[RMDB]
The record gives the reactivity of an RNA of 177 nucleotides to 2A3 and DMS. The reactions ran in a buffer of 150 mM KOAc, 10 mM MgCl2 and 150 mM bicine (pH 8.5), at 24 C. The DMS profile rests on 2,257 reads.

RNA sequence: GGGAACGACUCGAGUAGAGUCGAAAAGGAACGUUGUUCGCAACGUUCCGUGCCGGAAACGGACAUGACGAUCGCGCGCAUGUCGGGAAACCGUUAACGCGAGCAUCAUGGUGUUCGCACCAUGAAACCUGAAGGACACAUUCGUGUGUCCUUCAGGAAAAGAAACAACAACAACAAC
Reactivity to 2A3 in 0.01 (KOAc 150mM, MgCl2 10mM, bicine 150mM(pH8.5), 24C), signal-to-noise 3, nucleotides 027 to 126: g010g010a000a000c020g010u010u000g040u080u140c250g010c110a010a010c000g000u000u000c020c000g000u040g030c010c000g050g110a140a110a020c100g110g000a020c000a010u020g070a100c000g030a070u020c020g000c000g000c010g010c020a010u030g010u040c000g020g030g070a110a040a010c040c000g000u030u100a140a040c020g000c020g010a010g070c020a130u020c000a000u000g000g010u010g010u050u050c180g030c090a000c000c000a010u030g020a040a010a010
Reactivity to DMS in 0.01 (KOAc 150mM, MgCl2 10mM, bicine 150mM(pH8.5), 24C), signal-to-noise 3, nucleotides 027 to 126: g010g000a000a000c010g020u010u000g010u010u010c240g000c000a000a010c000g040u000u000c000c000g010u010g000c050c040g010g010a090a090a050c020g000g000a030c030a010u010g010a090c020g000a060u000c050g000c020g000c030g020c010a020u000g000u010c000g000g010g020a090a120a150c300c010g000u020u000a090a090c040g000c000g000a020g020c300a110u020c000a010u000g010g010u000g000u000u010c160g020c020a020c030c000a010u010g000a040a120a140